[RMDB]
RNA sequence: GGGAACGACUCGAGUAGAGUCGAAAAGUCAGUUCGGCGUUGUAGGUGUCCACGGGCGGGAAGUGGGUGAACACGCGGGUGCCGUCCAGACCCUCCCACCAGAACGUGUGGUGGGGGAAGGCGUUGGUCUGGCUCCAGGAGAUCUUCUGGGUGAGGAACCAUCUCGUACCUUCGGGUACGAGAUGGUAAAAGAAACAACAACAACAAC
Reactivity to 2A3 in 0.01 (KOAc 150mM, MgCl2 10mM, bicine 150mM(pH8.5), 24C), signal-to-noise 2, nucleotides 027 to 156: g040u040c050a020g020u060u080c040g080g060c010g060u000u060g160u150a040g060g000u090g030u000c010c050a080c000g020g030g020c160g000g000g030a080a170g060u100g010g050g020u070g060a040a020c050a010c040g060c000g030g050g010u080g030c000c010g000u000c000c000a000g000a080c010c010c000u040c060c000c000a000c020c000a010g070a300a100c190g100u160g050u050g060g000u000g000g030g000g010g030a010a090g060g060c130g000u000u040g010g030u000c080u090g000g000c000u000c000c000a020g060g040a090g060a150u090c080u100u000c000u120g090g040g000u090g090a070g050g020a000
An RNA of 207 nucleotides, treated with 2A3 and read out base by base.
It was measured as part of the RMDB library OK3TST.